[RMDB]
RNA sequence: GGGAACGACUCGAGUAGAGUCGAAAAGGAACUUCUCAACGUCCCCCGGGUCGAGACCACAACCCUUUCAAGCCUGACGAAGAACGCCCGUGUCGGAGUAAAGUUCAUCGAGGCCUGGCUGUGUGGAAAGUACAGUCUUCUUCGGAAGACUGUACUUAAAAGAAACAACAACAACAAC
Reactivity to DMS in 0.01 (KOAc 150mM, MgCl2 10mM, bicine 150mM(pH8.5), 24C), signal-to-noise 1, nucleotides 027 to 126: g040g010a090a130c080u000u020c000u000c050a110a240c080g000u000c020c020c000c030c070g030g000g020u010c020g010a040g010a260c000c000a060c030a050a080c010c010c070u000u000u000c090a040a070g010c000c010u020g020a100c030g000a040a080g010a050a020c080g010c060c000c050g010u010g010u000c060g020g000a080g000u000a050a120a090g000u000u000c010a070u000c020g000a110g010g000c000c040u000g000g020c090u000g000u000g010u000g020g000a070